Conditions: 150 mM KOAc, 10 mM MgCl2 and 150 mM bicine (pH 8.5), 24 C. An RNA of 177 nucleotides, treated with DMS and read out base by base. The DMS profile rests on 1,178 reads. Source: RMDB library OK2TRN, as collected in RNAgym. Reactivities are given for positions 27 through 126.
[RMDB]
RNA sequence: GGGAACGACUCGAGUAGAGUCGAAAACAUGGCAGCAAGCCUGACAGGGCUCAUGCGCGCCCCUUCUGCCCCACACCUGCCUCCCAUCAGCUCCCCAGCGGAGGGGCAGAGGUUCACGGUGCCUGACUGUAGGGGCUAGAUUCGUCUAGCCCCUACAAAAAGAAACAACAACAACAAC
Reactivity to DMS in 0.01 (KOAc 150mM, MgCl2 10mM, bicine 150mM(pH8.5), 24C), signal-to-noise 2, nucleotides 027 to 126: c130a080u020g010g000c020a160g030c120a100a050g000c010c020u000g020a090c300a240g000g010g020c000u000c100a060u000g000c080g010c170g000c010c010c080c010u000u010c020u000g000c020c010c000c020a130c200a180c060c030u000g010c010c060u010c000c010c010a090u000c160a050g020c030u000c020c000c010c030a130g010c030g030g040a090g010g000g000g030c030a010g010a010g010g010u000u000c110a120c150g010g000u010g000c080c040u000g000a110c150